The record gives the reactivity of an RNA of 207 nucleotides to DMS and 2A3. Values cover nucleotides 27 to 156. Conditions: 150 mM KOAc, 10 mM MgCl2 and 150 mM bicine (pH 8.5), 24 C. DMS adducts were read by reverse transcription with MarathonRT.
RNA sequence: GGGAACGACUCGAGUAGAGUCGAAAAGUAAGCCCGCUGGGCCUGUUCCCUUGUGUAUUUCAUCGAUCGUACUGAAGCGCGCACGGUACGGGAGAAAUACCCAAGAUCACAGGCCUGUGCUGAAGCGCGCACGGCAACCGAAAGGUGCGGAUCCUGAACUAUUGAUACCCUUCGGGGUAUCAAUAGUAAAAGAAACAACAACAACAAC
Reactivity to DMS in 0.01 (KOAc 150mM, MgCl2 10mM, bicine 150mM(pH8.5), 24C), signal-to-noise 1, nucleotides 027 to 156: g030u000a140a160g010c010c000c010g000c000u000g000g020g000c000c030u000g000u000u010c150c110c000u020u010g030u000g020u000a030u010u000u010c000a140u010c040g000a070u010c000g050u000a000c030u000g000a060a100g050c020g040c010g040c030a300c020g010g020u000a020c040g010g020g010a060g000a010a020a040u000a000c040c050c000a030a060g000a200u010c050a020c010a010g000g000c000c000u000g000u000g010c000u020g040a070a090g000c020g070c000g020c000a300c010g000g040c000a080a120c030c010g000a140a120a190g040g010u000g000c040g000g000a250u000c000c020u000g010a290
Reactivity to 2A3 in 0.01 (KOAc 150mM, MgCl2 10mM, bicine 150mM(pH8.5), 24C), signal-to-noise 2, nucleotides 027 to 156: g060u030a030a030g080c000c010c010g000c010u010g000g000g000c010c010u000g000u040u060c100c000c000u000u000g020u010g010u000a000u010u000u010c140a240u300c150g130a120u090c000g030u000a000c000u010g060a270a150g000c000g000c000g030c010a010c010g000g000u000a000c000g010g060g020a210g000a000a000a000u000a000c030c020c000a000a020g010a030u080c020a000c000a000g000g030c000c000u000g000u010g000c000u020g000a100a040g000c000g000c000g000c030a010c000g000g010c010a040a010c000c000g080a140a050a030g040g000u020g020c030g010g010a050u060c000c040u080g060a100